[RMDB]
RNA sequence: GGGAACGACUCGAGUAGAGUCGAAAAUCAGAAUCAGGCCGGAGUGUUUAGCGCUCCGUAAACACGGUCGUACAUCCAGCCGGUAGCCUGGUUCCUUGCAUUGAGUGAUGUACGGAGUUUAAAGAGCAAAAGAAAGACCUGUUCGCAGGUCUUUCAACCUUACCAAUACCUUCGGGUAUUGGUAAGGAAAAGAAACAACAACAACAAC
Reactivity to 2A3 in 0.01 (KOAc 150mM, MgCl2 10mM, bicine 150mM(pH8.5), 24C), signal-to-noise 3, nucleotides 027 to 156: u080c010a010g000a010a010u010c000a010g000g000c010c000g010g000a000g010u000g040u080u210u290a110g100c010g010c020u000c000c000g000u030a030a020a000c140a020c050g020g020u030c020g010u000a010c000a020u000c030c030a010g010c020c030g020g000u030a000g000c000c000u000g010g000u000u000c000c010u050u100g010c020a170u050u130g030a030g090u090g020a020u010g010u010a010c020g050g010a100g030u080u130u120a080a110a010g100a010g000c060a080a060a010a060g000a000a010a000g000a000c000c000u020g000u020u050c150g000c070a000g000g000u000c010u000u000u000c000a000a000
Reactivity to DMS in 0.01 (KOAc 150mM, MgCl2 10mM, bicine 150mM(pH8.5), 24C), signal-to-noise 2, nucleotides 027 to 156: u000c050a040g000a040a020u000c000a050g050g000c010c050g030g030a060g040u000g000u000u000u000a190g030c020g020c010u010c000c010g000u010a010a090a110c100a100c060g050g020u000c060g000u000a020c000a060u010c000c050a120g050c020c030g050g050u000a090g040c050c000u000g000g010u000u000c010c050u000u000g000c090a150u000u000g000a180g000u000g000a070u010g020u000a040c020g030g000a180g020u000u000u000a070a070a150g000a150g000c030a070a040a110a150g000a030a020a010g020a000c000c000u000g020u000u000c300g010c010a030g020g010u000c000u000u000u000c000a040a070
The record gives the reactivity of an RNA of 207 nucleotides to 2A3 and DMS.
For DMS the reverse transcriptase was MarathonRT.
Conditions: 150 mM KOAc, 10 mM MgCl2 and 150 mM bicine (pH 8.5), 24 C.